[RMDB]
RNA sequence: GGGAACGACUCGAGUAGAGUCGAAAAUUGUGGAUUGCUUGUGUGCUGGCAGGCUACUACUGGUAAGAAUGGCUAGUGUCAGCAGGGAUGGCUCCUCUCUGGGUUCCAUCUCACCAAGAUGAGUGGUGUAACAUUAAUGCUUCGGCAUUAAUGUUACAAAAGAAACAACAACAACAAC
Reactivity to 2A3 in 0.01 (KOAc 150mM, MgCl2 10mM, bicine 150mM(pH8.5), 24C), signal-to-noise 2, nucleotides 027 to 126: u080u020g060u050g060g100a150u100u080g040c020u040u050g050u010g000u020g140c020u000g020g000c030a030g020g060c020u010a030c000u010a030c020u050g120g080u190a100a070g040a090a040u070g000g040c030u030a090g250u030g000u070c000a000g000c020a000g000g010g000a000u010g010g010c030u030c000c000u020c010u030c070u080g020g000g020u060u000c000c000a020u020c000u020c010a060c020c020a070a050g120a170u110g030a060g110u110g040g040u050
Reactivity to DMS in 0.01 (KOAc 150mM, MgCl2 10mM, bicine 150mM(pH8.5), 24C), signal-to-noise 2, nucleotides 027 to 126: u000u000g050u000g010g040a170u000u020g020c070u000u000g020u010g020u000g010c000u000g000g060c040a070g020g000c010u000a070c110u010a130c050u010g030g020u000a120a050g010a120a150u010g000g010c010u000a060g010u000g010u000c020a020g030c030a130g010g000g010a030u010g000g000c060u000c040c000u000c230u020c210u000g010g020g010u010u010c000c010a020u000c010u000c000a090c140c040a030a080g010a040u000g000a090g030u010g020g020u010